[RMDB]
RNA sequence: GGGAACGACUCGAGUAGAGUCGAAAAGAGGAAGUUCGAGAACUGCCAUGGCCUCGCGCUUCUGGAUAAAUUACAAGGUCUAUCCGCCUUGCAAAAAAGUUCACGAGCGGAAGAUGCGUCCGAAUUACAUUUAUUAUGGAUUCGUCCAUAAUAAAUGAAAAGAAACAACAACAACAAC
Reactivity to DMS in 0.01 (KOAc 150mM, MgCl2 10mM, bicine 150mM(pH8.5), 24C), signal-to-noise 9, nucleotides 027 to 126: g010a200g000g010a080a050g020u000u000c030g010a080g010a080a080c040u000g020c080c120a080u010g010g010c080c010u000c050g010c080g010c010u000u000c140u000g000g000a070u010a050a090a170u010u000a060c050a020a040g000g010u000c060u010a120u010c150c170g010c010c010u010u000g000c070a000a030a070a090a050a100g000u000u000c030a050c110g000a060g010c010g000g000a060a070g000a060u000g010c060g000u000c020c020g010a090a080u010u000a150
Reactivity to 2A3 in 0.01 (KOAc 150mM, MgCl2 10mM, bicine 150mM(pH8.5), 24C), signal-to-noise 6, nucleotides 027 to 126: g120a010g010g020a020a010g010u020u040c020g010a010g010a120a040c040u080g100c090c040a110u090g020g000c000c000u010c030g010c020g000c000u030u030c010u020g000g020a070u090a160a130a040u150u080a040c030a070a030g060g000u000c020u070a240u030c030c000g000c010c010u000u020g010c030a060a050a060a040a040a040g050u080u070c030a020c070g020a030g010c010g020g020a010a010g050a030u090g070c020g040u000c010c010g060a060a040u130u060a050
The record gives the reactivity of an RNA of 177 nucleotides to DMS and 2A3. Reactivities are given for positions 27 through 126. For 2A3, 15,342 sequencing reads were counted. The DMS profile rests on 19,490 reads. Conditions: 150 mM KOAc, 10 mM MgCl2 and 150 mM bicine (pH 8.5), 24 C. For 2A3 the reverse transcriptase was SuperScript II with manganese.